[RMDB]
RNA sequence: GGGAACGACUCGAGUAGAGUCGAAAAGUUUCCGGGUUCGCCCGGAAACAAAGUGUGUGUGAAAAAGAGAGAGAGAAAAUCACACACACAAACUCUCUCUCAAAAGAGAAGUCUUCGGACUUCUCAACGUUUUAAUGUUGUUCGCAACAUUAAAACGAAAAGAAACAACAACAACAAC
Reactivity to DMS in 0.01 (KOAc 150mM, MgCl2 10mM, bicine 150mM(pH8.5), 24C), signal-to-noise 2, nucleotides 027 to 126: g010u000u000u000c000c000g010g000g030u000u020c180g040c010c010c010g000g000a000a000a000c010a040a080a140g020u010g010u000g000u000g000u010g010a040a040a070a100a140g010a170g000a030g000a020g010a090g010a180a080a130a110u000c010a030c000a000c000a010c010a010c040a050a070a090c120u010c010u000c000u000c010u020c010a070a070a120a100g000a000g000a020a000g010u000c000u000u010c160g050g030a030c000u000u010c000u000c010a040a100
Reactivity to 2A3 in 0.01 (KOAc 150mM, MgCl2 10mM, bicine 150mM(pH8.5), 24C), signal-to-noise 1, nucleotides 027 to 126: g000u000u010u000c010c000g000g000g010u030u050c170g050c070c000c040g020g020a000a000a010c000a000a020a000g000u000g000u000g000u010g010u000g080a160a110a010a210a010g070a030g020a000g000a000g000a010g040a090a120a020a030u050c010a010c000a000c000a000c010a010c020a020a060a020c050u050c000u000c010u000c000u000c020a070a070a030a010g000a010g000a000a000g000u000c000u060u080c230g070g010a000c000u040u000c000u000c000a000a010
The data come from the RNA Mapping Database (RMDB), library M2PK50. Chemical mapping of a 177-nucleotide RNA with DMS and 2A3. The reactions ran in a buffer of 150 mM KOAc, 10 mM MgCl2 and 150 mM bicine (pH 8.5), at 24 C. For DMS the reverse transcriptase was MarathonRT.